[RMDB]
RNA sequence: GGGAACGACUCGAGUAGAGUCGAAAAUGAGACAAACACGCUUCACAAUGUGCUGCAAAGAAACAUUGUUUAUGCAAAGGCACUUCGCAAUGUGUGCUCAAACAUUGCUUAUUCAAACACGCUUCACAAAAGAAUCAGUGGUUCGCCACUGAUUCAAGGAACGAAGUUACUUCGGUAACUUCGUUCCAAAAGAAACAACAACAACAAC
Reactivity to 2A3 in 0.01 (KOAc 150mM, MgCl2 10mM, bicine 150mM(pH8.5), 24C), signal-to-noise 3, nucleotides 027 to 156: u150g040a030g030a010c050a000a130a000c030a000c040g010c010u000u060c010a000c000a010a020u000g010u010g000c030u000g040c030a140a090a120g100a060a150a030c000a010u000u050g090u020u050u140a170u200g070c040a050a040a040g140g000c000a000c000u030u030c020g000c000a020a030u030g010u000g000u000g020c030u060c160a010a070a000c000a010u000u020g010c000u030u140a160u120u150c070a080a140a020c060a000c130g110c040u140u130c060a040c050a130a090a010a040g030a000a000u000c000a000g000u010g010g020u070u040c170g030c040c000a020c000u000g000a010u000u000c000a000a000
This 207-nucleotide RNA was probed chemically with 2A3. The data come from the RNA Mapping Database (RMDB), library M2RFPK. The RNA was probed in 150 mM KOAc, 10 mM MgCl2 and 150 mM bicine (pH 8.5) at 24 C.